[RMDB]
RNA sequence: GGGAACGACUCGAGUAGAGUCGAAAAAUACUGUAAGCCAAUAAAACAUAACGCCAAAUACAAUAAAUGCUGCUCGAUGUACUUUCUAUGUGAUAUUUUGGCGUUAUUUUGAUUUACCAUUGCACAUCGAGCAUGUUAACAGGCUAUACGGUUAUAAGAUUUAAUUAUCCUUCGGGAUAAUUAAAUCAAAAGAAACAACAACAACAAC
Reactivity to DMS in 0.01 (KOAc 150mM, MgCl2 10mM, bicine 150mM(pH8.5), 24C), signal-to-noise 1, nucleotides 027 to 156: a170u010a030c030u000g000u010a050a090g020c010c000a130a140u010a100a150a120a140c100a090u000a040a030c020g000c000c030a020a010a100u000a090c060a110a170u000a080a060a190u000g000c070u000g010c000u000c010g030a030u030g000u000a050c030u010u010u000c090u030a110u020g000u000g000a070u000a050u000u000u010u010g010g010c000g030u000u000a000u000u000u000u000g010a090u000u000u000a030c030c060a110u010u000g010c000a040c020a020u010c060g000a060g000c000a030u000g000u010u010a090a070c060a130g020g020c020u000a110u000a060c030g010g010u000u010a060u000a100a290
Reactivity to 2A3 in 0.01 (KOAc 150mM, MgCl2 10mM, bicine 150mM(pH8.5), 24C), signal-to-noise 3, nucleotides 027 to 156: a000u070a010c010u000g000u010a010a010g010c000c030a090a080u140a170a170a010a020c040a020u020a020a000c000g000c000c040a020a090a020u110a050c100a130a050u110a240a150a070u180g010c030u010g000c010u010c010g010a010u010g050u050a130c060u060u250u200c120u200a150u120g130u060g110a080u060a130u160u030u000u010g000g000c000g000u000u010a000u000u090u000u040g030a020u010u040u170a090c040c020a060u070u190g050c050a010c000a020u000c000g000a000g000c000a000u020g000u000u000a070a020c020a030g020g000c000u050a070u000a230c000g000g020u090u050a070u050a180a070
This 207-nucleotide RNA was probed chemically with DMS and 2A3. For 2A3 the reverse transcriptase was SuperScript II with manganese. Values cover nucleotides 27 to 156. High DMS reactivity at an A or C suggests that its Watson-Crick edge is free. For 2A3, 1,618 sequencing reads were counted.